[RMDB]
RNA sequence: GGGAACGACUCGAGUAGAGUCGAAAAAGCGAAUAAAUAAUGCUGAACGCGGUGGGCGGCAGGUUUUUUUUCAGAAUAAUUUCAUCAUAGCCGUUCACAUAGCCAAAGUAAUUAUGUUCUAUCGGAUCUUAAAGUAUACUUUCGAGUAUACUUUAAGAAAAGAAACAACAACAACAAC
Reactivity to DMS in 0.01 (KOAc 150mM, MgCl2 10mM, bicine 150mM(pH8.5), 24C), signal-to-noise 2, nucleotides 027 to 126: a090g010c090g000a070a020u020a070a120a080u010a030a020u020g010c000u000g000a080a150c220g000c010g020g020u000g010g020g000c000g000g030c010a120g000g000u000u000u000u000u010u010u020u020c240a120g000a110a070u020a020a020u020u000u010c050a050u010c060a090u030a140g030c020c000g020u000u000c000a000c000a020u030a110g010c010c020a070a080a020g000u010a040a030u000u000a020u010g000u000u000c070u000a130u010c010g000g020a270u000
Reactivity to 2A3 in 0.01 (KOAc 150mM, MgCl2 10mM, bicine 150mM(pH8.5), 24C), signal-to-noise 4, nucleotides 027 to 126: a010g100c050g030a030a020u130a140a140a020u050a040a020u020g010c000u010g030a020a010c010g000c010g010g000u000g000g000g000c010g010g000c010a010g040g040u010u000u000u000u000u010u040u100c090a080g080a090a030u110a080a040u050u160u080c040a070u030c020a010u110a070g000c000c000g000u010u010c000a000c000a020u070a000g000c000c000a030a020a010g010u010a070a030u020u020a030u060g050u030u010c020u050a130u040c030g020g010a020u000